The record gives the reactivity of an RNA of 177 nucleotides to DMS and 2A3.
The 2A3 profile rests on 310 reads.
The DMS profile rests on 1,597 reads.
RNA sequence: GGGAACGACUCGAGUAGAGUCGAAAAUUCAUUGAAUGUCAAAGAUUGCAUAUUGGAUAUGUCCAAGUCUGUUGCUGCGCCUAAGGAUCAGAUCAAACCACUAAUACCUAUGGUACGAACGGCGGCACAUGACGGUGGUGUUCGCACCACCGUCAUGAAAAGAAACAACAACAACAAC
Reactivity to DMS in 0.01 (KOAc 150mM, MgCl2 10mM, bicine 150mM(pH8.5), 24C), signal-to-noise 2, nucleotides 027 to 126: u000u000c010a050u000u030g000a060a040u000g050u000c080a030a080a230g010a080u000u000g000c030a040u000a030u000u070g000g010a190u000a070u000g020u020c000c010a070a120g020u000c070u050g000u000u020g020c090u030g000c040g040c110c030u000a160a080g000g000a030u020c050a060g000a090u010c140a050a200a050c140c060a030c060u000a070a080u000a030c060c000u020a100u000g000g010u030a030c060g000a030a100c190g000g010c010g000g010c130a100
Reactivity to 2A3 in 0.01 (KOAc 150mM, MgCl2 10mM, bicine 150mM(pH8.5), 24C), signal-to-noise 1, nucleotides 027 to 126: u030u000c000a000u000u000g100a000a120u140g000u120c270a070a060a060g260a240u000u080g090c060a010u010a090u280u020g090g000a140u100a050u190g120u000c000c000a000a000g010u000c040u000g300u300u010g080c080u000g000c000g130c000c090u100a180a020g090g000a000u000c080a060g040a120u040c100a080a000a000c040c000a000c130u010a020a020u000a140c000c000u130a090u140g000g000u040a000c080g000a010a000c000g000g000c040g000g000c000a000
Conditions: 150 mM KOAc, 10 mM MgCl2 and 150 mM bicine (pH 8.5), 24 C. DMS adducts were read by reverse transcription with MarathonRT.